Annotation
Structure probing data (DMS and 2A3) for a 177-nucleotide construct. For DMS the reverse transcriptase was MarathonRT. The RNA was probed in 150 mM KOAc, 10 mM MgCl2 and 150 mM bicine (pH 8.5) at 24 C. Source: RMDB library OK2TRN, as collected in RNAgym.

[RMDB]
RNA sequence: GGGAACGACUCGAGUAGAGUCGAAAAGACUCAGUGUGUGAGAGACAGACACACUCUCUCAGUCUGAGACUCACUCUGAGUGACACUGUGACACUCUCUGUCAGAGUCAGUCACACACAGAGAGACACCAGGAUCACAGAUUCGUCUGUGAUCCUGGAAAAGAAACAACAACAACAAC
Reactivity to DMS in 0.01 (KOAc 150mM, MgCl2 10mM, bicine 150mM(pH8.5), 24C), signal-to-noise 3, nucleotides 027 to 126: g010a140c020u000c010a010g020u010g020u000g010u000g000a070g000a130g020a150c230a040g010a080c150a080c220a060c080u000c020u000c010u010c050a040g000u000c020u000g010a090g010a080c010u010c120a150c000u010c010u000g000a040g030u000g000a080c040a100c050u000g010u010g000a040c050a040c190u000c140u010c090u000g000u000c040a070g000a010g020u000c210a100g010u000c010a030c020a060c160a140c040a020g000a020g010a070g020a210c130a080
Reactivity to 2A3 in 0.01 (KOAc 150mM, MgCl2 10mM, bicine 150mM(pH8.5), 24C), signal-to-noise 3, nucleotides 027 to 126: g040a010c010u010c020a000g000u070g020u010g010u040g220a040g010a010g070a100c030a100g180a100c030a010c000a040c110u020c000u020c010u000c010a010g090u000c000u020g030a030g040a090c020u030c020a040c010u020c050u060g010a010g010u020g020a000c020a010c060u100g030u040g190a010c030a000c040u140c000u040c060u090g040u080c050a020g000a010g130u060c080a040g050u020c000a010c000a010c010a020c010a010g040a000g000a020g030a030c010a040